Conditions: 150 mM KOAc, 10 mM MgCl2 and 150 mM bicine (pH 8.5), 24 C. An RNA of 177 nucleotides, treated with 2A3 and read out base by base. The 2A3 profile rests on 567 reads.

RNA sequence: GGGAACGACUCGAGUAGAGUCGAAAAAUUUAACUGCCAGGACGGUCACCUUUGGGGUGGUGACAAGUGUGAUCACUUGGGUGGUGGCUGUGUUUGCGCUUCUCCCAGGAAUCUCGUUUACCAGAUCCCGGUGCAUAGCAUUCGUGCUAUGCACCGGAAAAGAAACAACAACAACAAC
Reactivity to 2A3 in 0.01 (KOAc 150mM, MgCl2 10mM, bicine 150mM(pH8.5), 24C), signal-to-noise 2, nucleotides 027 to 126: a000u190u250u110a080a000c160u100g000c000c000a000g030g020a010c010g000g060u000c000a000c020c020u240u170u210g050g000g000g000u060g000g000u020g060a000c000a030a170g170u220g030u060g270a020u060c000a000c000u040u000g110g040g150u080g020g020u020g000g000c000u000g010u070g080u100u070u020g100c080g000c030u000u010c080u010c070c010c000a000g000g100a090a090u100c000u020c150g130u050u060u000a180c010c000a010g000a060u020c020